[RMDB]
RNA sequence: GGGAACGACUCGAGUAGAGUCGAAAAUUUACCAUCUUUUUGACGAACAUCACUGUCUUUACCUUUCUUCCAACCAGCUUCAUCUAAUAAUGAUUCUGCUUUUUUAAGGUCAUACUUACGUGUUGGCGACUAAGGGAGGAUUCGUCCUCCCUUAGUCAAAAGAAACAACAACAACAAC
Reactivity to 2A3 in 0.01 (KOAc 150mM, MgCl2 10mM, bicine 150mM(pH8.5), 24C), signal-to-noise 2, nucleotides 027 to 126: u040u010u060a090c010c010a090u090c060u060u200u020u050u120g010a020c030g010a070a060c020a040u070c020a030c070u060g040u060c000u040u090u050a040c000c000u020u050u030c010u050u030c030c000a040a060c000c000a030g010c010u060u030c010a110u050c040u040a050a040u080a110a030u180g040a040u070u010c010u070g090c100u160u050u020u000u030u120a060a000g030g000u020c010a040u030a100c010u140u050a030c070g020u000g000u110u050g000g020c040
Reactivity to DMS in 0.01 (KOAc 150mM, MgCl2 10mM, bicine 150mM(pH8.5), 24C), signal-to-noise 2, nucleotides 027 to 126: u010u010u020a170c030c030a130u010c010u020u010u000u000u000g010a060c070g010a080a080c040a050u000c080a070c050u000g000u010c010u010u000u000a080c050c020u000u000u000c040u010u000c030c050a070a070c100c070a060g010c020u000u000c010a060u010c050u000a020a050u020a100a100u000g000a050u000u000c020u020g010c070u000u030u000u000u000u000a030a110g000g010u000c100a040u010a130c060u000u000a100c240g020u000g030u000u020g020g020c270

Chemical mapping of a 177-nucleotide RNA with 2A3 and DMS. For DMS, 1,823 sequencing reads were counted. The RNA was probed in 150 mM KOAc, 10 mM MgCl2 and 150 mM bicine (pH 8.5) at 24 C.